[RMDB]
RNA sequence: GGGAACGACUCGAGUAGAGUCGAAAAGUAGCUGGAUACGUCCAGCUACAAGUAGGCUGGUACGCCAGCCUACAAUGAUGCCCCUCACCCACUGUCGAAGAUCCCCGGUGGGCGAGGGGGCGGCAGGGAUCAAGCCGUCCGUUACGACGGACGGCAAGUAUGGUGAAAAUUUCGAUUUUCACCAUACAAAAGAAACAACAACAACAAC
Reactivity to 2A3 in 0.01 (KOAc 150mM, MgCl2 10mM, bicine 150mM(pH8.5), 24C), signal-to-noise 1, nucleotides 027 to 156: g000u000a000g000c000u010g030g000a040u030a100c240g030u040c000c000a000g000c000u000a000c010a010a000g010u000a000g010g000c010u000g020g020u080a060c200g070c000c000a000g040c020c000u000a000c000a020a000u120g040a040u170g020c000c000c000c000u020c000a020c000c020c080a020c000u080g050u190c090g070a080a040g030a180u080c020c010c000c000g000g000u000g000g010g000c010g000a010g000g010g000g000g040c020g050g040c060a010g000g050g010a060u080c030a030a040g000c000c000g020u010c000c010g010u000u070a090c300g010a000c010g050g000a000c040g000g000c000a000a000